[RMDB]
RNA sequence: GGGAACGACUCGAGUAGAGUCGAAAAGAGGGGACCGUCCCUCGGUAAUGGCGAAUGGGACCCAGAACUCUCUCUAGAUUCCCAGAGAGAAUCGAGAGAAAACUGGCUCUCCCUUAGCCAUCCGAGUAAGCAACUACCUUCGGGUAGUUGAAAAGAAACAACAACAACAAC
Reactivity to 2A3 in 0.01 (KOAc 150mM, MgCl2 10mM, bicine 150mM(pH8.5), 24C), signal-to-noise 9, nucleotides 027 to 129: g090a020g010g030g010g030a040c020c040g140u150c020c010c000u000c000g000g000u060a070a030u010g000g000c010g040a040a040u040g000g000g000a030c040c000c000a010g020a070a060c010u000c000u000c000u000c010u050a080g000a010u000u010c010c030c140a040g060a000g000a010g000a120a000u010c010g000a010g000a000g000a010a030a020a060c000u010g000g000c000u000c000u000c000c000c000u000u020a000g000c000c000a000u000c000c000g000a010g020u070a110a020g060
Reactivity to DMS in 0.01 (KOAc 150mM, MgCl2 10mM, bicine 150mM(pH8.5), 24C), signal-to-noise 9, nucleotides 027 to 129: g020a060g020g000g000g010a110c060c070g040u030c020c030c010u020c020g000g000u030a010a010u000g030g000c000g000a140a060u030g000g000g010a030c210c010c000a010g020a090a220c200u010c000u020c010u000c000u010a100g030a040u000u000c000c010c120a120g020a130g020a130g020a040a010u000c020g010a010g000a000g040a020a030a110a160c000u000g000g000c030u040c080u000c000c010c030u020u010a230g020c010c000a000u030c020c000g000a020g010u050a120a110g010